[RMDB]
RNA sequence: GGGAACGACUCGAGUAGAGUCGAAAAAGCCAUUCGUGGCUAGUGGAGGGGUCACCGUUGAAACCGUUCGAGCGAAGAACAUACCUGAAGCCUCCACGGGUAUGGGAGCUCAACGGUGGAGGUGACGGAGGCACCCACAUGUGAACUUCGGUUCAAAGUCCUGUAUUUAGUUCGCUAAAUACAGGACAAAAGAAACAACAACAACAAC
Reactivity to 2A3 in 0.01 (KOAc 150mM, MgCl2 10mM, bicine 150mM(pH8.5), 24C), signal-to-noise 5, nucleotides 027 to 156: a000g010c020c000a050u080u110c300g100u080g010g000c030u020a050g050u040g090g120a240g020g100g030g080u170c010a010c000c000g100u160u030g000a000a000a010c000c010g010u020u060c250g010a010g000c010g150a300a010g000a020a000c000a000u010a000c000c000u030g040a160a040g020c020c000u000c000c000a030c000g000g000g000u010a000u000g010g000g010a000g000c000u000c010a000a000c010g000g010u010g000g000a000g000g000u000g000a010c010g000g000a000g010g010c000a020c000c070c000a030c010a040u240g090u070g100a010a010c000u050u090c250g140g000u040u030c040a080a030a020
Reactivity to DMS in 0.01 (KOAc 150mM, MgCl2 10mM, bicine 150mM(pH8.5), 24C), signal-to-noise 1, nucleotides 027 to 156: a050g000c010c020a090u020u000c270g040u000g000g040c020u000a080g030u000g000g010a150g000g010g030g010u040c050a020c030c010g040u030u000g010a290a220a040c020c010g060u000u010c260g050a020g010c050g000a080a200g010a220a250c000a030u000a010c010c020u000g000a020a120g040c090c010u020c010c010a090c030g040g000g000u000a010u000g000g010g000a090g000c010u000c010a020a010c020g030g010u010g000g000a060g010g030u010g000a140c020g010g020a040g040g000c000a070c030c000c000a050c060a050u000g020u030g020a060a030c040u000u000c120g050g030u000u010c010a030a100a240